[RMDB]
RNA sequence: GGGAACGACUCGAGUAGAGUCGAAAAAACUGUUUAAGGCAAUAACGAACUAAUUCUAAGCAAGUAAUGGAGAAAUGCCAGGGUCACUAUCUAGCCAUAAUAGUGCUUGACAGUAUGAUACUAACUGAAUAUGGUAAACCGUUCGCGGUUUACCAAACUUUUCUCAAUCGUUCGCGAUUGAGAAAAGAAAAGAAACAACAACAACAAC
Reactivity to 2A3 in 0.01 (KOAc 150mM, MgCl2 10mM, bicine 150mM(pH8.5), 24C), signal-to-noise 2, nucleotides 027 to 156: a000a000c100u110g040u050u080u130a050a030g000g010c030a030a070u110a210a000c070g050a040a020c060u140a020a050u190u000c060u170a110a050g050c140a000a110g070u210a080a080u150g080g010a030g020a090a100a000u010g000c010c010a030g020g000g060u050c000a000c020u010a030u020c050u050a030g050c010c000a050u050a140a060u010a090g020u010g020c030u000u030g000a000c000a000g050u090a070u120g050a020u040a090c030u030a040a130c020u090g060a020a050u130a060u140g000g000u000a000a000a000c010c010g000u030u020c230g000c010g100g000u000u000u000a000c010c000a020a000a000
Reactivity to DMS in 0.01 (KOAc 150mM, MgCl2 10mM, bicine 150mM(pH8.5), 24C), signal-to-noise 1, nucleotides 027 to 156: a100a060c040u020g010u000u000u000a100a090g050g000c040a050a050u010a090a110c030g000a050a080c010u000a030a090u030u000c090u020a110a070g020c050a100a090g020u000a070a040u010g020g010a170g000a050a070a040u000g000c010c010a030g010g000g010u000c020a050c040u000a020u000c040u000a060g060c090c090a080u010a070a070u000a070g000u000g000c010u010u010g040a060c000a010g020u000a050u010g040a110u000a050c010u000a050a090c040u020g010a000a090u010a090u010g020g010u020a000a030a010c000c000g070u000u000c300g020c060g030g000u000u010u000a000c010c000a000a040a090

Chemical mapping of a 207-nucleotide RNA with 2A3 and DMS. It was measured as part of the RMDB library M2RFPK. Values are in units of 0.01, from 0 to 300, in steps of 10. The DMS profile rests on 2,226 reads. As a SHAPE reagent, 2A3 marks flexible, mostly unpaired nucleotides at the ribose 2'-OH. The reactions ran in a buffer of 150 mM KOAc, 10 mM MgCl2 and 150 mM bicine (pH 8.5), at 24 C.